[RMDB]
RNA sequence: GGGAACGACUCGAGUAGAGUCGAAAACAUCCACUGCUACGGCAGUGGAUGAACGAGGUAGGUACGCCUACCUCGAAAGGAGGAUGUUUUCAUAGACAUUAAACGUCCAUGGUACGCCAUGGACGAAGUAAUUUACCUACUUCGGUAGGUAAAUUACAAAAGAAACAACAACAACAAC
Reactivity to 2A3 in 0.01 (KOAc 150mM, MgCl2 10mM, bicine 150mM(pH8.5), 24C), signal-to-noise 5, nucleotides 027 to 126: c000a000u000c000c000a010c000u000g000c000u020a100c210g150g000c010a000g010u020g000g000a000u000g000a010a010c020g000a000g010g000u000a000g000g020u040a030c220g070c040c000u000a010c000c010u010c000g000a050a010a000g160g060a060g070g030a040u040g050u000u050u050u070c130a130u150a090g070a040c010a030u090u150a100a170a050c010g000u000c010c000a000u000g010g010u050a060c290g030c040c000a000u000g000g010a000c000g010a010a000
Reactivity to DMS in 0.01 (KOAc 150mM, MgCl2 10mM, bicine 150mM(pH8.5), 24C), signal-to-noise 6, nucleotides 027 to 126: c010a010u000c000c000a010c000u000g010c010u010a110c250g050g010c000a000g020u000g000g010a010u000g010a030a120c050g000a000g000g010u000a000g010g010u000a090c300g030c000c000u000a000c000c000u000c000g000a020a090a110g010g010a140g000g000a030u000g010u000u000u000u010c210a120u010a110g010a020c040a040u000u000a060a090a210c010g000u000c000c000a020u000g000g010u000a130c300g020c020c000a000u000g000g000a000c000g010a010a060